[RMDB]
Record summary
The data come from the RNA Mapping Database (RMDB), library RNAMAK. Chemical mapping of a 207-nucleotide RNA with 2A3. 2A3 adducts were read by reverse transcription with SuperScript II with manganese. The reactions ran in a buffer of 150 mM KOAc, 10 mM MgCl2 and 150 mM bicine (pH 8.5), at 24 C.

RNA sequence: GGGAACGACUCGAGUAGAGUCGAAAAGAUAUGGAGUUUAGGGAGACUUGGGCUUCGUUGAUCGCUGCUCGGAAACGAGCAGCGGGAGAAGCCUCAAGUCAUCGAUCUAAACUCCUAAGUCAAAAGGAAGCUAAACUGUUCGCAGUUUAGCUUCCAACCUGUUGUUAGUCUUCGGACUAACAACAGGAAAAGAAACAACAACAACAAC
Reactivity to 2A3 in 0.01 (KOAc 150mM, MgCl2 10mM, bicine 150mM(pH8.5), 24C), signal-to-noise 1, nucleotides 027 to 156: g050a010u070a080u110g000g020a010g000u020u000u000a010g000g010g010a050g000a010c000u000u000g010g000g010c050u000u000c030g110u210u010g010a000u000c000g050c030u000g040c020u010c010g020g070a120a050a040c000g000a000g020c000a000g000c020g000g010g000a010g000a000a000g000c000c000u010c000a000a000g000u010c030a010u030c000g010a010u040c000u010a000a000a000c000u000c000c000u010a010a000g010u000c010a000a080a030a050g020g050a010a000g000c000u000a000a000a000c000u010g080u220u300c300g030c110a000g000u000u000u000a000g000c010u000u010c000c000a010a000